RNA sequence: GGGAACGACUCGAGUAGAGUCGAAAAAGCUCGUCGAUCACCACAUUAGGCCCGCCCUCUAUGAGCGCAUCUAGCCUCCUCCUAGCAUCCUCGGCGUACCUCCGCGACACGUUAGUGGCCAGCAGCAUCUAAUUACAUAUUUCGAUAUGUAAUUAGAAAAAGAAACAACAACAACAAC
Reactivity to 2A3 in 0.01 (KOAc 150mM, MgCl2 10mM, bicine 150mM(pH8.5), 24C), signal-to-noise 6, nucleotides 027 to 126: a000g050c060u040c040g050u020c030g030a090u050c030a030c090c000a040c030a100u130u170a050g060g010c000c020c010g030c010c030c000u020c020u040a120u140g050a030g020c050g000c040a040u020c060u080a050g010c000c000u020c000c000u020c000c010u020a010g010c010a050u020c000c010u020c020g020g000c010g020u030a070c000c010u010c010c020g030c010g030a020c020a000c090g030u050u070a060g020u050g070g020c010c000a020g000c020a000g010c010a060
Reactivity to DMS in 0.01 (KOAc 150mM, MgCl2 10mM, bicine 150mM(pH8.5), 24C), signal-to-noise 9, nucleotides 027 to 126: a110g010c030u000c050g020u010c050g010a090u000c040a090c040c040a070c100a090u010u010a100g010g010c020c040c050g000c040c010c030u000c060u000a060u010g010a080g010c080g020c080a050u010c070u000a110g010c030c010u000c020c020u000c020c010u000a080g010c070a070u000c030c020u000c040g010g010c030g010u000a090c060c020u000c040c040g020c040g000a070c060a040c070g010u010u000a080g030u000g000g010c030c020a060g010c060a080g010c120a120

Structure probing data (2A3 and DMS) for a 177-nucleotide construct. DMS (dimethyl sulfate) methylates the pairing face of unpaired adenines and cytosines. The RNA was probed in 150 mM KOAc, 10 mM MgCl2 and 150 mM bicine (pH 8.5) at 24 C. The 2A3 profile rests on 18,667 reads. Reactivities are given for positions 27 through 126. Source: RMDB library OK2TRN, as collected in RNAgym.